Chemical mapping of a 207-nucleotide RNA with DMS and 2A3.
DMS (dimethyl sulfate) methylates the pairing face of unpaired adenines and cytosines.
2A3 adducts were read by reverse transcription with SuperScript II with manganese.
The reactions ran in a buffer of 150 mM KOAc, 10 mM MgCl2 and 150 mM bicine (pH 8.5), at 24 C.
Reactivities are given for positions 27 through 156.
For DMS the reverse transcriptase was MarathonRT.
The data come from the RNA Mapping Database (RMDB), library RNAMAK.
[RMDB]
RNA sequence: GGGAACGACUCGAGUAGAGUCGAAAAGUCCUGCUUCGGCAGGACAUAUCCUAAGUCCGUCUAAGCCUGUGGGAGACCGAUAAGUAUCGGAAACGAUACUUUUGACGGUCGAAGAACACAGGCUGCGGAUAUGGAAGACGGUGCAAUUCGUUGCACCCUACUGUAGACGAUUCGUCGUCUACAGUAGAAAAGAAACAACAACAACAAC
Reactivity to DMS in 0.01 (KOAc 150mM, MgCl2 10mM, bicine 150mM(pH8.5), 24C), signal-to-noise 3, nucleotides 027 to 156: g000u010c000c000u000g020c010u000u020c300g070g000c020a030g010g030a000c010a020u000a010u010c000c010u000a090a260g000u000c000c000g010u000c040u000a120a030g010c000c020u010g040u000g020g000g010a300g010a000c010c000g020a110u020a010a040g010u000a020u000c010g020g010a150a100a240c000g020a020u000a020c000u000u000u000u000g020a230c080g020g010u000c010g010a110a140g000a170a180c000a000c020a020g020g030c000u000g020c010g000g030a020u010a150u000g010g000a100a090g000a020c040g020g000u000g010c000a030a100u000u010c190g020u000u000g020c010a010c000c000
Reactivity to 2A3 in 0.01 (KOAc 150mM, MgCl2 10mM, bicine 150mM(pH8.5), 24C), signal-to-noise 3, nucleotides 027 to 156: g000u020c010c000u010g010c000u010u070c300g160g000c020a030g000g010a000c000a000u110a010u010c000c000u020a190a010g010u000c010c010g000u010c160u160a050a040g000c000c010u000g000u020g050g000g000a020g000a000c000c000g010a030u010a050a000g010u000a010u000c010g020g060a070a030a010c000g000a000u010a010c000u030u010u020u060g210a100c020g000g000u000c010g010a030a020g010a010a000c010a000c000a000g000g000c000u000g000c000g000g000a000u020a030u060g070g020a080a100g100a050c110g000g000u020g000c010a010a050u060u150c270g110u080u020g000c010a000c000c000